[RMDB]
RNA sequence: GGGAACGACUCGAGUAGAGUCGAAAAUUGACAACACCUCUGUCCGUGACGAUGAGUUAUCCAUCCCGCCGGGAACGGGAAGCGUAGCCUGUUUCUACUCUGCUCUUAUCUGGUUCCUCUUAUCUCCGACUUUCGAGGAAUUCGUUCCUCGAAAGUCAAAAGAAACAACAACAACAAC
Reactivity to 2A3 in 0.01 (KOAc 150mM, MgCl2 10mM, bicine 150mM(pH8.5), 24C), signal-to-noise 4, nucleotides 027 to 126: u020u040g050a020c020a070a020c000a100c020c000u050c030u060g040u030c000c030g050u030g070a040c050g050a100u080g010a010g080u080u060a070u080c020c020a050u010c010c010c020g030c020c040g070g020g040a060a040c010g030g000g030a040a030g050c020g020u050a040g020c000c000u040g030u060u010u000c000u010a010c010u000c000u010g030c000u000c000u070u080a090u070c030u090g110g000u010u010c010c000u020c010u050u130a100u050c040u020c000c030
Reactivity to DMS in 0.01 (KOAc 150mM, MgCl2 10mM, bicine 150mM(pH8.5), 24C), signal-to-noise 1, nucleotides 027 to 126: u000u000g070a140c090a120a050c010a200c080c000u000c070u000g070u020c030c000g070u000g010a160c130g000a050u000g000a130g000u000u000a020u050c110c040a260u000c040c020c010g060c050c020g030g020g050a070a090c090g080g000g000a120a020g000c220g020u000a070g000c080c010u040g000u010u020u000c000u000a020c000u010c020u000g000c010u000c000u010u000a120u040c120u020g020g000u000u000c030c000u000c220u000u000a120u000c020u000c010c300

An RNA of 177 nucleotides, treated with 2A3 and DMS and read out base by base.
It was measured as part of the RMDB libraries RFM100 and RFMREP.
The RNA was probed in 150 mM KOAc, 10 mM MgCl2 and 150 mM bicine (pH 8.5) at 24 C.